RNA sequence: GGGAACGACUCGAGUAGAGUCGAAAAGCGCAAAUCCACAAACGCCAACGAUGAGCGUUUAGCUGUAGCCGCUUAAGGCAACAGCCGGGGCCGCCUGAGCCCUGUUACCAAAGACGGCUGGCGGGGGUAAUUACUUAUUGCUUCGGCAAUAAGUAAAGGAUAGUACUCAGUUCGCUGAGUACUAUCCAAAAGAAACAACAACAACAAC
Reactivity to DMS in 0.01 (KOAc 150mM, MgCl2 10mM, bicine 150mM(pH8.5), 24C), signal-to-noise 1, nucleotides 027 to 156: g030c000g050c040a050a160a040u000c000c020a120c090a030a260a040c040g030c030c020a060a140c160g030a130u000g010a240g070c030g010u000u030u000a050g020c000u010g030u000a100g030c000c000g000c300u020u000a100a230g020g030c000a070a010c000a040g020c010c010g010g010g040g020c000c010g030c040c030u000g000a120g000c000c000c000u020g000u000u000a160c090c030a160a240a110g030a150c290g020g000c000u000g030g020c040g000g030g020g010g050u000a090a150u000u000a000c000u000u000a000u020u000g000c000u000u010c300g060g000c000a050a000u000a010a020g000u020a000a100a150
Reactivity to 2A3 in 0.01 (KOAc 150mM, MgCl2 10mM, bicine 150mM(pH8.5), 24C), signal-to-noise 2, nucleotides 027 to 156: g030c030g000c040a050a030a050u040c050c030a080c080a090a140a010c060g020c020c040a080a040c100g110a120u060g030a030g000c000g000u060u080u060a000g000c010u010g010u010a010g010c000c010g080c220u240u190a130a120g000g000c000a020a000c000a010g010c000c000g000g000g000g000c000c110g030c000c020u020g000a000g000c000c000c000u030g020u050u070a030c010c000a000a020a000g020a000c010g010g020c000u050g030g000c010g030g000g010g000g000u060a090a110u100u010a010c000u000u010a010u000u000g000c000u020u040c170g090g000c000a000a000u000a000a000g000u010a000a000a000